[RMDB]
RNA sequence: GGGAACGACUCGAGUAGAGUCGAAAAGUGUCCGAACGCCGCAUACGACCGAUAAACUGGCGAGUGGAUCGGGCCGAGCGCAGCUCUCGGCCCUUCCGCCAAUGAUCAGCCAGCAGCCGCUGCAACCCAGACCCCAAUGUUUCGACAUUGGGGUCUGAAAAGAAACAACAACAACAAC
Reactivity to 2A3 in 0.01 (KOAc 150mM, MgCl2 10mM, bicine 150mM(pH8.5), 24C), signal-to-noise 4, nucleotides 027 to 126: g080u060g050u010c000c000g010a060a000c050g020c020c030g030c020a030u060a160c030g030a020c010c030g020a050u160a080a110a030c030u030g000g000c010g030a040g040u070g000g020a050u070c120g000g010g000c000c000g000a000g000c080g020c080a040g000c040u020c000u010c020g000g010c000c000c000u020u000c010c000g000c000c010a080a120u190g030a080u080c040a020g020c000c000a000g000c010a000g020c020c010g010c020u020g000c010a000a060c010c020
Reactivity to DMS in 0.01 (KOAc 150mM, MgCl2 10mM, bicine 150mM(pH8.5), 24C), signal-to-noise 2, nucleotides 027 to 126: g000u010g030u000c010c010g020a130a080c040g010c000c030g000c030a070u000a120c040g000a080c070c040g000a000u040a070a080a160c050u000g000g030c080g000a090g020u010g010g010a050u000c300g000g040g000c000c000g000a030g060c070g030c150a020g000c150u000c020u020c000g010g100c030c000c000u000u000c000c000g000c000c060a050a200u030g000a050u010c130a090g000c010c000a030g000c100a030g020c000c010g010c080u000g000c010a170a090c020c050